[RMDB]
Source: RMDB library RFM100, as collected in RNAgym. An RNA of 177 nucleotides, treated with 2A3 and read out base by base. The reactions ran in a buffer of 150 mM KOAc, 10 mM MgCl2 and 150 mM bicine (pH 8.5), at 24 C. For 2A3 the reverse transcriptase was SuperScript II with manganese. The 2A3 profile rests on 1,007 reads.

RNA sequence: GGGAACGACUCGAGUAGAGUCGAAAAUGUCCCAUCGCUCCAGCCCCGAUCGGCCCAACGCUCAGGGAAACGGAGCAGCUCAAUAAAAACUUUUGAUAUUAGUUUUUAUGGGUAUUUACACUCUGGUCGAAAAUAAUCCGUUCGCGGAUUAUUUUCGAAAAGAAACAACAACAACAAC
Reactivity to 2A3 in 0.01 (KOAc 150mM, MgCl2 10mM, bicine 150mM(pH8.5), 24C), signal-to-noise 3, nucleotides 027 to 126: u050g060u020c020c000c000a050u100c060g000c000u010c000c000a050g040c000c010c030c000g000a030u040c030g070g110c070c060c030a140a070c040g000c010u030c040a050g000g000g000a100a120a000c090g010g000a000g000c010a000g040c010u000c010a140a120u010a010a000a000a000a000c010u070u040u090u200g130a110u060a140u300u100a050g000u000u000u000u000u000a000u000g000g000g000u090a130u010u130u130a110c100a010c020u030c020u070g060g040u060